[RMDB]
RNA sequence: GGGAACGACUCGAGUAGAGUCGAAAACAACUAUACGAGAUGUGGGUGGAGGUGUUUAAUAAGCGUCCAACCCAGUUUGAUUAUCACAUGUACCUGCGGAACAUGAAAGAUGAAGCGAAGCGGGAUGCGUACUAUGGACCUUCGGGUCCAUAGUACGAAAAGAAACAACAACAACAAC
Reactivity to 2A3 in 0.01 (KOAc 150mM, MgCl2 10mM, bicine 150mM(pH8.5), 24C), signal-to-noise 2, nucleotides 027 to 126: c000a000a010c020u130a040u020a190c070g040a020g020a170u160g040u050g220g000g010u040g030g000a080g040g000u050g070u100u040u010a170a080u200a060a000g000c030g100u030c000c030a070a100c000c000c000a010g010u030u030u060g060a050u050u090a090u050c080a050c070a170u150g050u110a110c010c020u090g020c050g010g000a010a000c000a010u060g090a110a060a130g130a050u080g020a000a050g100c120g020a010a000g000c020g000g080g020a020u130g040
Reactivity to DMS in 0.01 (KOAc 150mM, MgCl2 10mM, bicine 150mM(pH8.5), 24C), signal-to-noise 2, nucleotides 027 to 126: c050a090a150c090u000a080u010a080c110g020a120g000a080u000g010u000g000g000g030u010g020g000a080g010g000u010g020u000u020u000a050a130u020a090a170g050c040g010u000c000c030a060a080c000c020c010a130g000u010u000u000g000a150u000u000a030u010c100a120c130a000u000g000u000a100c050c000u010g030c100g000g000a140a030c010a020u000g000a130a090a110g010a030u010g000a030a080g030c050g000a110a050g010c130g050g000g010a090u000g010